[RMDB]
RNA sequence: GGGAACGACUCGAGUAGAGUCGAAAAUUGAGACGAAGAGGGCCGUGUCAAGAUGUUUGCAAGAUUCUUUUCACUGCUGACUAGUUAUGUGCAUUGCAUACAUAUGUAGUACGUAGAUACAUUGAAAACAAUAACCCAAUUUCGAUUGGGUUAUUGUAAAAGAAACAACAACAACAAC
Reactivity to DMS in 0.01 (KOAc 150mM, MgCl2 10mM, bicine 150mM(pH8.5), 24C), signal-to-noise 8, nucleotides 027 to 126: u010u020g010a070g010a060c050g020a120a080g000a070g000g000g020c010c030g010u020g010u000c040a060a070g010a090u010g010u010u010u020g020c130a090a080g000a090u010u000c020u000u010u010u010c050a090c030u000g000c020u010g010a070c030u000a060g000u010u000a020u010g030u010g000c090a110u040u040g010c100a060u020a060c080a050u020a030u010g000u010a020g000u000a020c050g010u020a030g010a110u000a060c160a080u030u020g010a060a050a080
Reactivity to 2A3 in 0.01 (KOAc 150mM, MgCl2 10mM, bicine 150mM(pH8.5), 24C), signal-to-noise 9, nucleotides 027 to 126: u090u110g040a030g020a020c050g040a070a060g040a080g040g020g000c010c010g040u030g020u020c010a030a030g030a100u100g110u100u120u130g110c060a080a040g020a190u070u010c010u020u030u030u040c030a030c020u020g000c010u030g050a060c020u030a030g130u150u030a040u090g050u030g030c130a140u050u230g010c020a020u060a120c030a020u130a040u170g050u030a040g020u010a030c070g030u030a030g030a100u070a070c060a090u040u210g050a050a060a010
The data come from the RNA Mapping Database (RMDB), library OK1LIB. Chemical mapping of a 177-nucleotide RNA with DMS and 2A3. The reactions ran in a buffer of 150 mM KOAc, 10 mM MgCl2 and 150 mM bicine (pH 8.5), at 24 C. The DMS profile rests on 25,940 reads.